Chemical mapping of a 207-nucleotide RNA with 2A3 and DMS. For 2A3, 1,141 sequencing reads were counted. Conditions: 150 mM KOAc, 10 mM MgCl2 and 150 mM bicine (pH 8.5), 24 C. The DMS profile rests on 3,509 reads. 2A3 adducts were read by reverse transcription with SuperScript II with manganese.
RNA sequence: GGGAACGACUCGAGUAGAGUCGAAAAAAGUGUUUGUACUUUAGGUUCUAGAAUUUGCCAGUUCUGCUUUGCAUUUCUUAUGUCUGGAAACUAAUUUACCUAACUAGAUAAAGAUUGUCAUUGAUAAUGGGAAUUGUGUCCUGUUACUGUCAUGGUCCCUAACCGAAUGGUUCGCCAUUCGGUUAGGAAAAGAAACAACAACAACAAC
Reactivity to 2A3 in 0.01 (KOAc 150mM, MgCl2 10mM, bicine 150mM(pH8.5), 24C), signal-to-noise 3, nucleotides 027 to 156: a000a000g110u080g020u000u080u050g000u060a040c000u050u040u020a020g050g000u020u040c020u030a030g020a120a120u160u040u110g040c020c050a040g020u150u060c060u100g060c020u030u110u160g000c010a050u090u150u030c000u100u170a100u280g050u000c030u010g020g030a040a030a050c010u020a050a060u020u050u100a030c020c010u020a040a060c020u030a030g100a160u080a080a040a020g040a120u060u080g080u080c050a020u060u010g070a050u060a100a050u020g000g030g040a030a050u100u160g060u030g020u100c010c000u000g020u030u030a060c050u050g030u080c010a080u070g050g000u000c010
Reactivity to DMS in 0.01 (KOAc 150mM, MgCl2 10mM, bicine 150mM(pH8.5), 24C), signal-to-noise 1, nucleotides 027 to 156: a090a070g020u010g010u000u000u000g010u000a010c010u020u000u010a030g020g010u000u000c030u010a040g020a110a100u000u010u000g010c090c090a130g000u010u000c080u000g010c030u040u000u000g010c030a100u000u000u010c050u000u000a110u010g040u000c010u060g000g010a040a040a040c030u010a020a020u000u000u000a020c030c060u000a030a020c060u030a070g020a160u000a060a070a130g000a090u000u000g030u000c000a110u000u000g010a090u000a060a010u000g020g000g000a020a090u010u000g020u000g000u010c010c030u000g010u000u000a040c000u010g010u000c040a110u010g000g020u000c070